[RMDB]
The data come from the RNA Mapping Database (RMDB), library RFMREP.
This 177-nucleotide RNA was probed chemically with 2A3 and DMS.
For DMS, 1,641 sequencing reads were counted.
Values are in units of 0.01, from 0 to 300, in steps of 10.
Conditions: 150 mM KOAc, 10 mM MgCl2 and 150 mM bicine (pH 8.5), 24 C.
The 2A3 profile rests on 1,402 reads.

RNA sequence: GGGAACGACUCGAGUAGAGUCGAAAACAGGUAGACCUACAUAGGCUGAUUGCGUGCCAGUAUUCACUCGGCGAGCCACGGCCUAGUGGGUUCUUUAUAUAAACCUUGUCGGCUUCGGCCGACAAGGGAAAUUAAUUUAGUUCGCUAAAUUAAUUUCAAAAGAAACAACAACAACAAC
Reactivity to 2A3 in 0.01 (KOAc 150mM, MgCl2 10mM, bicine 150mM(pH8.5), 24C), signal-to-noise 2, nucleotides 027 to 126: c020a000g060g190u150a030g010a030c010c000u000a010c020a270u050a010g020g000c010u020g020a300u010u110g020c050g080u090g000c020c010a020g000u050a180u090u300c080a040c050u050c180g000g000c000g010a020g020c000c020a010c030g000g000c000c000u000a000g000u020g010g000g000u040u020c000u000u040u000a170u000a020u020a050a130a000c000c000u000u000g010u030c000g030g010c040u020u140c250g050g040c020c030g000a010c000a000a010g010g000
Reactivity to DMS in 0.01 (KOAc 150mM, MgCl2 10mM, bicine 150mM(pH8.5), 24C), signal-to-noise 2, nucleotides 027 to 126: c060a120g000g010u010a060g010a040c000c000u010a020c030a100u000a000g010g000c010u000g010a100u020u010g010c030g030u010g010c030c010a040g020u010a130u000u030c180a040c020u000c160g030g010c000g000a070g010c010c150a030c020g000g000c000c000u010a010g020u020g000g010g020u000u000c000u000u010u000a080u000a100u010a120a110a300c000c000u000u000g000u010c000g020g000c000u000u020c250g010g000c000c000g010a010c000a020a020g010g010